The record gives the reactivity of an RNA of 207 nucleotides to 2A3 and DMS. Reactivities are given for positions 27 through 156. For 2A3 the reverse transcriptase was SuperScript II with manganese. DMS adducts were read by reverse transcription with MarathonRT. Reactivities are rounded to 0.1 and cut off at 0 and 3. The reactions ran in a buffer of 150 mM KOAc, 10 mM MgCl2 and 150 mM bicine (pH 8.5), at 24 C.
RNA sequence: GGGAACGACUCGAGUAGAGUCGAAAACCGUGACAUUGCGAAAGCAAGGCUGGCGGUGGGUAGUCCUGGGCGGCGACAGCCUUGGACUGCGGCGUAAAGGUGUACCUGGGGCCGUUAAACCUAUCGUGAAAGGCAACUUGGUUCGCCAAGUUGCCAACAGUAUCUAGCGGUUCGCCGCUAGAUACUGAAAAGAAACAACAACAACAAC
Reactivity to 2A3 in 0.01 (KOAc 150mM, MgCl2 10mM, bicine 150mM(pH8.5), 24C), signal-to-noise 3, nucleotides 027 to 156: c010c010g050u070g060a080c130a180u020u060g010c030g040a080a010a010g000c030a030a000g070g060c050u070g050g000c000g000g000u020g000g000g000u030a020g000u010c020c000u010g000g010g010c030g080g000c100g080a070c130a050g000c000c000u000u000g000g000a000c010u010g010c000g000g000c010g030u080a040a030a020g000g030u130g120u280a200c010c010u020g000g000g130g000c000c010g000u010u070a100a130a040c000c000u000a000u030c020g010u020g100a210a060a040g000g000c000a000a010c000u000u000g010g010u080u070c140g030c130c000a000a000g000u000u000g000c000c000a000a000
Reactivity to DMS in 0.01 (KOAc 150mM, MgCl2 10mM, bicine 150mM(pH8.5), 24C), signal-to-noise 2, nucleotides 027 to 156: c020c020g000u020g020a080c080a090u000u000g030c020g030a270a100a290g000c000a040a030g020g020c010u000g030g020c020g000g000u010g020g020g020u000a030g040u000c020c000u000g020g020g040c000g000g030c110g000a110c170a240g010c000c030u000u000g030g020a030c010u000g000c000g010g000c030g010u010a160a250a060g020g000u010g000u000a040c020c000u000g000g050g020g000c010c030g020u000u000a090a090a230c000c020u010a130u000c010g060u000g000a060a090a120g040g010c000a020a000c000u000u000g000g000u000u010c300g030c030c000a010a040g000u000u020g000c010c020a000a010